Description: The record gives the reactivity of an RNA of 177 nucleotides to DMS and 2A3. Conditions: 150 mM KOAc, 10 mM MgCl2 and 150 mM bicine (pH 8.5), 24 C.

[RMDB]
RNA sequence: GGGAACGACUCGAGUAGAGUCGAAAACGUCCGGCAACUUCCGAGAGCCUGACGAAAUAAACUUUCGUGUCCCCUUUCGACACCUGAUGUUUUCACUCAGUGUCAAAGCGCAGGCAAGGACAAGCCCUCAAGGCAUCCGCUUCGGUGGGUGCCUUGAAAAAGAAACAACAACAACAAC
Reactivity to DMS in 0.01 (KOAc 150mM, MgCl2 10mM, bicine 150mM(pH8.5), 24C), signal-to-noise 8, nucleotides 027 to 126: c140g030u000c030c050g000g010c110a080a110c110u020u020c100c060g010a150g000a210g000c000c000u000g000a020c000g010a020a030a040u040a100a120a150c260u000u000u010c020g010u020g000u010c040c030c100c020u000u000u010c110g010a020c000a010c120c080u000g000a010u040g010u020u020u050u030c180a070c060u000c010a030g010u000g000u000c020a020a030a030g010c100g020c020a030g000g000c010a110a100g010g000a020c090a110a120g000c010c010c040
Reactivity to 2A3 in 0.01 (KOAc 150mM, MgCl2 10mM, bicine 150mM(pH8.5), 24C), signal-to-noise 9, nucleotides 027 to 126: c030g030u010c010c000g020g000c050a130a110c080u190u100c080c090g120a090g010a020g160c000c010u000g010a010c010g020a020a020a010u190a030a100a030c070u020u040u030c030g030u020g110u090c000c010c000c020u010u030u070c110g010a000c000a020c010c100u030g020a040u110g120u110u090u120u100c050a060c040u010c010a000g000u000g000u010c000a000a020a000g040c050g000c020a020g010g000c020a020a100g020g000a010c010a020a010g030c000c000c000
For DMS the reverse transcriptase was MarathonRT.